This 177-nucleotide RNA was probed chemically with DMS. For DMS, 12,106 sequencing reads were counted. DMS (dimethyl sulfate) methylates the pairing face of unpaired adenines and cytosines. It was measured as part of the RMDB library OK2TST.

[RMDB]
RNA sequence: GGGAACGACUCGAGUAGAGUCGAAAAUCUGGCACAGAAUCCGGGUGAUGUGCGGGGUUGGGAUGUGCUGGCGCCGAUCUAUCUGCGGCUUGGGCGGGCUUCCGACGCGGUCAGCGCCUAUCGCACAUCAUUAAUAGCUCUUCGGAGCUAUUAAUGAAAAAGAAACAACAACAACAAC
Reactivity to DMS in 0.01 (KOAc 150mM, MgCl2 10mM, bicine 150mM(pH8.5), 24C), signal-to-noise 6, nucleotides 027 to 126: u000c050u010g010g020c020a050c040a090g000a170a100u000c050c050g010g010g010u000g010a100u000g010u000g010c030g000g000g000g020u010u000g010g000g010a100u010g010u000g010c010u000g010g000c060g030c010c040g010a030u000c050u010a110u000c090u010g020c060g010g010c060u010u000g010g000g010c090g020g010g010c130u000u010c050c090g000a060c090g020c110g010g000u000c040a050g010c020g010c010c020u010a070u010c120g010c020a030c050a060